[RMDB]
RNA sequence: GGGAACGACUCGAGUAGAGUCGAAAAGACUCUCUGUGGAGAACAAGCUCUUUGAGAGACCCCUCGGCCUGGCAGGUGUUUGGGGCAGCAUUGUGAGGCAGUGGUUGGAAGACAUUCUCCCAGCUAACCUUUAUACUCACUUCGGUGAGUAUAAAGGAAAAGAAACAACAACAACAAC
Reactivity to 2A3 in 0.01 (KOAc 150mM, MgCl2 10mM, bicine 150mM(pH8.5), 24C), signal-to-noise 2, nucleotides 027 to 126: g010a000c000u000c000u000c000u030g090u140g060g030a040g020a110a080c100a150a060g080c010u050c000u200u300u140g050a070g020a040g000a110c010c030c010c010u020c040g070g030c010c000u030g030g000c050a020g000g050u010g050u060u140u120g020g000g040g000c000a010g000c020a050u050u070g030u030g040a070g070g000c010a000g030u030g030g020u050u050g070g010a030a020g030a010c020a040u100u020c010u000c020c010c010a010g000c050u050a050a080
Reactivity to DMS in 0.01 (KOAc 150mM, MgCl2 10mM, bicine 150mM(pH8.5), 24C), signal-to-noise 4, nucleotides 027 to 126: g010a200c020u000c000u000c020u010g010u020g010g000a040g000a140a140c170a100a180g020c000u000c010u000u000u010g000a070g000a060g000a190c040c030c010c040u000c090g000g020c040c020u010g020g000c050a050g010g010u000g010u000u010u000g000g020g010g010c050a060g000c080a070u000u010g010u010g010a100g000g010c060a040g010u010g010g030u010u000g000g010a060a090g010a080c160a160u010u010c070u000c000c000c000a090g000c130u010a070a180
The record gives the reactivity of an RNA of 177 nucleotides to 2A3 and DMS. For 2A3, 2,115 sequencing reads were counted. The RNA was probed in 150 mM KOAc, 10 mM MgCl2 and 150 mM bicine (pH 8.5) at 24 C. The data come from the RNA Mapping Database (RMDB), library OK2TST. For DMS, 3,839 sequencing reads were counted.